[RMDB]
RNA sequence: GGGAACGACUCGAGUAGAGUCGAAAAUCGCUGCCUAAUUAAACGGCAGCGCGUCCCCGGUAGGUUUGCGGGUGGCCUACCGGAGGGCGUCAGAGACACCCGCUCGGGCUACUCGGUCGCACGGGGCUGAGUAGCUGACACCUAACCCGUGCUACCCCACAUCCAAUGCGUUCGCGCAUUGGAUGUGAAAAGAAACAACAACAACAAC
Reactivity to 2A3 in 0.01 (KOAc 150mM, MgCl2 10mM, bicine 150mM(pH8.5), 24C), signal-to-noise 1, nucleotides 027 to 156: u080c010g000c000u010g000c000c000u170a300a300u260u270a160a100a060c090g000g000c000a000g000c000g000c000g000u000c000c010c000c000g000g000u000a000g010g000u010u000u070g000c000g000g000g000u000g000g000c000c000u000a000c000c000g020g000a070g000g000g000c010g000u050c020a030g010a050g010a100c000a000c000c010c000g010c000u010c010g000g000g000c010u000a000c000u000c000g020g000u010c020g010c000a000c000g000g010g010g000c000u010g000a000g000u010a000g000c000u010g000a000c000a130c000c040u140a100a070c000c000c010g000u000g000c000u000a000c000c000c000